[RMDB]
RNA sequence: GGGAACGACUCGAGUAGAGUCGAAAAGAUAUGGACGUUGAUCAUCCUGAAAUCCAGCGAUAAGAUGUCGUCGGAAACGACGAUACAUCUUUUGACGCUGAACUGGGAUGAUCAACGUCCUAAGUCAUCCCAUCGUAAGGUUCGCCUUACGAUGGGAAAAAGAAACAACAACAACAAC
Reactivity to DMS in 0.01 (KOAc 150mM, MgCl2 10mM, bicine 150mM(pH8.5), 24C), signal-to-noise 1, nucleotides 027 to 126: g000a040u020a300u010g000g000a000c010g030u000u000g020a010u000c010a000u000c000c000u000g000a060a270a220u010c050c030a000g040c000g050a200u000a020a020g000a000u000g000u000c000g000u000c010g010g010a110a230a200c010g010a000c000g000a140u000a030c040a000u000c000u010u000u020u000g030a130c080g020c020u000g000a000a120c230u010g010g010g030a020u000g000a000u000c010a000a010c000g010u000c000c020u020a000a050g000u020c010a110
Chemical mapping of a 177-nucleotide RNA with DMS. The data come from the RNA Mapping Database (RMDB), library TTRINS. For DMS the reverse transcriptase was MarathonRT.